The record gives the reactivity of an RNA of 207 nucleotides to 2A3. The reactions ran in a buffer of 150 mM KOAc, 10 mM MgCl2 and 150 mM bicine (pH 8.5), at 24 C. For 2A3, 524 sequencing reads were counted. 2A3 adducts were read by reverse transcription with SuperScript II with manganese.
RNA sequence: GGGAACGACUCGAGUAGAGUCGAAAAAACUCAGCUAGGGAGAGUAUAACAUUCAUGUUGACGAGACCUAGACGAAACACAGAGGAAAAUUAUUAAACACUGGAUAGUAUUAGUAAUGACUCUGUGUAAAACUCUUCUACGUUCGCGUAGAAGAGAACUACGAUGUUCGGUUCGCCGAACAUCGUAGAAAAGAAACAACAACAACAAC
Reactivity to 2A3 in 0.01 (KOAc 150mM, MgCl2 10mM, bicine 150mM(pH8.5), 24C), signal-to-noise 1, nucleotides 027 to 156: a000a000c010u010c000a000g020c000u000a000g010g010g010a060g000a060g040u090a210u060a300a040c070a090u100u210c100a110u290g020u050u060g060a040c020g000a000g030a020c000c000u000a010g030a040c010g060a020a010a000c000a000c000a020g020a010g000g000a040a150a060a000u000u000a000u010u010a010a030a000c070a010c060u060g000g150a160u290a220g010u050a010u050u010a020g000u000a010a010u010g010a010c000u000c010u000g000u000g010u000a000a000a000a020c000u010c000u020u000c000u000a010c000g000u000u050c180g040c020g060u020a020g000a000a010g000a000g000a000a000